Chemical mapping of a 177-nucleotide RNA with DMS. The RNA was probed in 150 mM KOAc, 10 mM MgCl2 and 150 mM bicine (pH 8.5) at 24 C.
RNA sequence: GGGAACGACUCGAGUAGAGUCGAAAAGUGAGAAUUUGUAAUUCAAAGACAACAACUGUCUGACCCCUUCCCCAUUGAGGCAGAUGGUUGGCAAGGACAAGCCUGUCCAGGUUGAAAUGGGUCCAGAGAACAGUAAGCACUUCGGUGCUUACUGUUCAAAAGAAACAACAACAACAAC
Reactivity to DMS in 0.01 (KOAc 150mM, MgCl2 10mM, bicine 150mM(pH8.5), 24C), signal-to-noise 1, nucleotides 027 to 126: g000u000g000a170g000a000a060u010u010u020g000u000a090a180u000u010c030a090a110a070g000a050c140a050a160c040a000a040c010u000g020u020c000u000g000a140c050c080c020c060u020u010c070c000c010c080a110u000u000g020a300g020g000c000a000g000a020u000g010g010u020u020g010g010c200a150a110g010g020a050c030a040a050g010c120c050u000g000u000c020c080a130g000g010u000u000g010a090a000a010u000g020g010g020u010c080c080a070g000a300